[RMDB]
RNA sequence: GGGAACGACUCGAGUAGAGUCGAAAAACCAUCAGCUAUUUGCGUGUGAGGAAACUUCUGGAUGCUGGUGAGUUAUUUUACAAGGGUAUAAAUAGGCCUGAAAAUUAGAAGUUAGAAGUAAAUAGAACAACAUUACACUUUUCGAAGUGUAAUGUUGAAAAGAAACAACAACAACAAC
Reactivity to DMS in 0.01 (KOAc 150mM, MgCl2 10mM, bicine 150mM(pH8.5), 24C), signal-to-noise 3, nucleotides 027 to 126: a090c010c010a130u010c150a140g010c010u000a020u000u010u000g010c020g020u010g020u000g020a130g020g000a130a060a030c010u000u000c010u000g000g010a020u000g010c020u000g010g020u000g000a170g010u010u000a030u000u000u010u010a080c060a170a150g010g000g010u000a070u010a020a030a060u000a060g000g000c010c010u000g000a020a020a030a040u000u000a030g000a020a030g010u000u000a090g010a100a130g010u000a020a020a030u000a030g000a110a210
Reactivity to 2A3 in 0.01 (KOAc 150mM, MgCl2 10mM, bicine 150mM(pH8.5), 24C), signal-to-noise 4, nucleotides 027 to 126: a000c020c000a060u090c050a010g060c010u040a030u060u060u060g020c020g040u170g080u080g090a160g040g000a100a030a010c000u020u010c000u030g040g030a020u020g000c020u010g020g010u020g020a070g040u060u030a030u020u080u020u010a040c050a120a190g300g050g010u080a080u070a110a050a020u050a030g000g100c000c000u010g030a040a090a020a020u040u050a010g000a040a000g020u040u090a030g040a180a010g030u060a020a020a060u070a030g020a040a020